[RMDB]
RNA sequence: GGGAACGACUCGAGUAGAGUCGAAAAGGCGCAACUUCAGCAGACUUAAGCGUUCUUCCCUGCUGACUGUGAAGAGAGCAGCAGAUCUCCCAGCACAGUGCUUGAGCUCUGCUAAGGGACAGACUGCCUCCUCAAGUGGGUCCUUGACACCCAUGCAGUAUACUUUUAGCUUCGGCUAAAAGUAUACAAAAGAAACAACAACAACAAC
Reactivity to DMS in 0.01 (KOAc 150mM, MgCl2 10mM, bicine 150mM(pH8.5), 24C), signal-to-noise 2, nucleotides 027 to 156: g010g020c030g010c030a080a140c040u010u010c020a020g040c020a030g000a050c020u000u000a030a140g020c030g000u010u000c160u000u020c030c050c000u000g030c040u000g010a110c060u000g020u000g020a100a050g020a110g000a170g040c010a180g010c020a140g000a210u010c000u000c000c020c010a090g020c040a080c000a040g040u010g010c060u010u000g000a080g050c070u000c010u010g010c020u000a030a020g010g020g020a110c050a130g000a110c030u000g010c010c010u020c010c050u000c030a090a120g000u000g010g020g020u000c000c100u010u010g000a240c040a050c000c020c010a060u000g010c070a280
Reactivity to 2A3 in 0.01 (KOAc 150mM, MgCl2 10mM, bicine 150mM(pH8.5), 24C), signal-to-noise 6, nucleotides 027 to 156: g010g000c010g000c030a050a040c020u060u080c110a050g000c000a010g030a050c010u040u060a050a000g000c020g090u160u060c050u100u080c020c020c000u020g010c030u030g030a260c030u040g030u080g200a210a060g090a030g010a010g050c100a010g010c010a010g030a140u030c030u030c030c010c010a010g020c030a040c010a040g040u030g070c010u050u060g030a020g010c090u000c000u010g000c000u000a010a070g040g010g030a040c060a080g060a080c070u080g010c000c000u030c010c000u100c030a100a060g030u020g000g020g010u030c060c100u100u180g030a100c030a010c050c000c000a000u020g020c000a010